[RMDB]
RNA sequence: GGGAACGACUCGAGUAGAGUCGAAAACUGACCACCAUCGACAAUUUUGUCCCGUUCGAUGUCAUCGAGCUUUUGGAUCGCGCCGCGCACAAUGAGCUUGGCAUCUAGCCGGGAUAGUAAGUGCGGCGAUGGGUAAAUCGUUCGCGAUUUACCCAUCAAAAGAAACAACAACAACAAC
Reactivity to DMS in 0.01 (KOAc 150mM, MgCl2 10mM, bicine 150mM(pH8.5), 24C), signal-to-noise 4, nucleotides 027 to 126: c070u020g010a050c000c020a100c050c050a070u040c030g010a040c060a060a070u000u000u010u040g000u000c020c040c010g000u010u040c100g010a070u000g030u000c040a110u010c020g010a040g020c040u000u010u010u000g010g020a150u030c180g000c040g010c020c020g000c020g060c080a100c070a090a080u100g010a060g000c000u000u010g050g000c010a130u020c200u010a100g000c030c000g020g000g020a060u000a100g010u000a130a060g030u010g010c000g000g010c050
Reactivity to 2A3 in 0.01 (KOAc 150mM, MgCl2 10mM, bicine 150mM(pH8.5), 24C), signal-to-noise 6, nucleotides 027 to 126: c050u050g080a040c000c010a020c000c020a100u070c030g050a040c030a140a130u050u070u090u220g050u020c010c010c020g030u070u100c020g000a030u040g090u090c040a110u080c090g040a020g020c000u070u060u060u110g160g050a180u190c040g030c010g020c150c090g040c000g000c020a010c010a120a120u180g020a050g080c000u030u040g010g020c010a030u050c060u060a040g010c050c000g030g000g010a020u000a010g010u040a120a070g000u020g040c010g020g000c030